[RMDB]
RNA sequence: GGGAACGACUCGAGUAGAGUCGAAAACAUGAUUGCUCGGCAUCUUUUAUGACGGGUAGGUCGGGUACGAACCGUCGAAAGGAUCGUCAGCUUUUUGGGCUAAAGGGAAGAGAGCUGGGCGAACUGACUGGUACUCUACAUUCGUGUAGAGUGCCAGAAAAGAAACAACAACAACAAC
Reactivity to 2A3 in 0.01 (KOAc 150mM, MgCl2 10mM, bicine 150mM(pH8.5), 24C), signal-to-noise 9, nucleotides 027 to 126: c050a070u150g020a110u080u110g010c010u010c030g010g010c010a070u000c030u010u030u010u030a190u110g010a010c010g020g010g030u060a040g030g130u110c090g040g020g120u170a090c060g030a110a070c010c000g030u030c010g050a030a030a000g070g030a020u030c040g030u020c010a010g010c000u040u040u020u060u070g100g010g000c050u110a110a070a090g090g040g020a070a020g050a010g010a020g030c020u030g000g010g020c020g020a050a050c030u040g090a030
Reactivity to DMS in 0.01 (KOAc 150mM, MgCl2 10mM, bicine 150mM(pH8.5), 24C), signal-to-noise 8, nucleotides 027 to 126: c070a100u040g010a070u020u010g010c010u010c050g010g000c030a160u000c040u000u010u000u010a060u030g010a010c000g000g000g010u020a100g000g020u010c040g020g000g010u040a070c150g000a100a200c020c000g000u000c030g000a050a060a070g000g000a050u000c060g010u010c060a030g010c020u000u000u010u020u020g000g000g010c050u010a050a110a100g000g020g000a090a070g000a060g010a080g010c010u000g000g010g010c040g010a040a080c060u000g000a210